[RMDB]
RNA sequence: GGGAACGACUCGAGUAGAGUCGAAAAUCCGUUUUGGAUGCACCUUGAGGAACAAGGUGGGUAAUUUUCGUUUUGAAGAUAUGCCACCGACUUAUAGAGCAGAGAGGCACCUAUGAGUUGAGUUCAGUGUGCAUAACUAGUUCGCUAGUUAUGCACAAAAAGAAACAACAACAACAAC
Reactivity to DMS in 0.01 (KOAc 150mM, MgCl2 10mM, bicine 150mM(pH8.5), 24C), signal-to-noise 6, nucleotides 027 to 126: u010c000c010g030u010u020u020u020g010g010a060u000g000c110a130c040c020u010u000g010a130g000g000a040a040c080a130a140g010g010u000g000g020g010u020a020a020u000u000u000u000c010g020u010u010u040u030g010a010a010g000a000u010a020u010g000c000c000a010c010c000g000a050c030u000u010a020u000a020g000a150g010c050a100g010a130g010a130g000g010c030a100c080c000u000a020u010g000a040g010u000u010g000a160g000u010u000c020a090g020
Reactivity to 2A3 in 0.01 (KOAc 150mM, MgCl2 10mM, bicine 150mM(pH8.5), 24C), signal-to-noise 4, nucleotides 027 to 126: u000c010c000g020u050u010u130u130g110g010a050u040g010c020a040c000c000u030u070g040a080g090g040a100a050c040a060a090g010g000u000g000g000g020u150a100a160u030u010u000u020c120g150u230u040u190u300g010a000a000g010a000u010a010u160g070c000c000a000c000c000g000a000c000u030u010a020u060a050g050a020g020c080a000g040a020g000a040g140g000c010a030c020c000u000a030u070g040a030g050u030u050g000a050g040u010u010c010a020g010